[RMDB]
RNA sequence: GGGAACGACUCGAGUAGAGUCGAAAACGGUAACACCCGAAGCCGGUGGCCCAACCCCUUGUGGGAGGGAGCUGUCGAAGGUGGGACUGGCGAUUGGGACGAAGUCGUAACAAGGUAGCCGUACCGGGAGUUACAGCUAAUUCGUUAGCUGUAACUCAAAAGAAACAACAACAACAAC
Reactivity to 2A3 in 0.01 (KOAc 150mM, MgCl2 10mM, bicine 150mM(pH8.5), 24C), signal-to-noise 5, nucleotides 027 to 126: c010g010g010u030a060a020c010a020c030c010c010g050a030a000g030c030c020g040g060u060g150g240c010c010c020a130a280c040c010c020c030u100u300g060u300g060g000g000a020g030g000g000a040g000c010u020g000u040c030g020a030a010g040g000u040g000g030g030a030c060u090g040g000c020g070a100u030u050g050g000g030a010c030g050a150a070g180u240c030g010u010a030a020c010a040a030g080g040u050a020g050c030c000g000u010a040c010c000g020g080
Reactivity to DMS in 0.01 (KOAc 150mM, MgCl2 10mM, bicine 150mM(pH8.5), 24C), signal-to-noise 5, nucleotides 027 to 126: c030g000g010u010a070a110c030a050c000c010c030g000a190a270g000c120c000g000g040u000g010g010c000c000c000a090a160c030c010c000c080u010u010g050u020g020g010g010a300g010g010g020a300g010c020u000g010u000c010g000a080a090g000g020u000g000g000g000a040c070u000g010g010c010g000a090u000u010g000g020g000a060c050g000a170a100g010u000c030g000u000a040a060c050a060a080g000g000u000a180g010c010c020g020u000a080c010c010g020g010